[RMDB]
RNA sequence: GGGAACGACUCGAGUAGAGUCGAAAAGAUAUGGAGGUUAGGGGGUCUGACGUAUAGACAUGAUCUGUGGUCGGAAACGACCACUAGAUCAACAGCUAUGACGUCAGACCCCCUAACCUCCUAAGUCGAUGGUGUAACAGUUCGCUGUUACACCAUCAAAAGAAACAACAACAACAAC
Reactivity to DMS in 0.01 (KOAc 150mM, MgCl2 10mM, bicine 150mM(pH8.5), 24C), signal-to-noise 1, nucleotides 027 to 126: g010a070u000a300u010g010g020a000g020g010u000u000a020g010g020g020g000g030u000c000u000g020a060c000g010u000a020u000a000g020a060c120a290u000g010a000u000c000u010g030u000g000g010u020c010g010g000a090a150a300c000g010a000c000c000a000c000u010a000g000a000u010c010a040a060c300a180g010c010u000a000u010g010a020c000g000u010c000a010g000a010c000c000c000c000c000u010a000a020c000c010u000c000c000u010a000a070g020u000c080